[RMDB]
RNA sequence: GGGAACGACUCGAGUAGAGUCGAAAAGCAUGCUAUUGAGCAGCAAUAAUGCAUAUUCUUGCCAGUCUAAAUGUUCUGGCUUGAGGAUUUUCCGAUGCCCAUAGAAAUGAUUGUCAUGUCCGGCGUACCCAAUAAACCGUUUCGACGGUUUAUUGGGAAAAGAAACAACAACAACAAC
Reactivity to 2A3 in 0.01 (KOAc 150mM, MgCl2 10mM, bicine 150mM(pH8.5), 24C), signal-to-noise 1, nucleotides 027 to 126: g010c040a060u070g010c010u060a050u270u200g110a040g090c030a010g030c030a040a060u200a160a010u100g020c020a030u020a070u140u000c010u010u020g000c000c010a000g020u010c030u120a300a160a130u180g050u110u000c010u000g000g000c000u000u030g010a000g010g020a040u060u040u000u000c030c010g060a060u130g020c000c000c010a080u090a100g090a060a190a050u130g050a060u180u170g070u090c020a020u090g020u100c030c030g060g000c020g050u020a080
Reactivity to DMS in 0.01 (KOAc 150mM, MgCl2 10mM, bicine 150mM(pH8.5), 24C), signal-to-noise 3, nucleotides 027 to 126: g000c050a040u000g010c040u000a110u010u000g010a120g020c060a030g020c050a110a080u010a110a040u020g000c070a070u010a090u010u000c010u000u000g010c000c000a020g030u010c070u010a100a110a160u010g010u010u010c000u000g000g000c010u010u000g010a020g010g010a100u000u000u010u000c030c070g000a110u000g000c030c000c050a090u000a080g020a080a080a050u000g000a130u000u010g000u000c040a030u000g010u000c040c040g010g020c070g020u010a140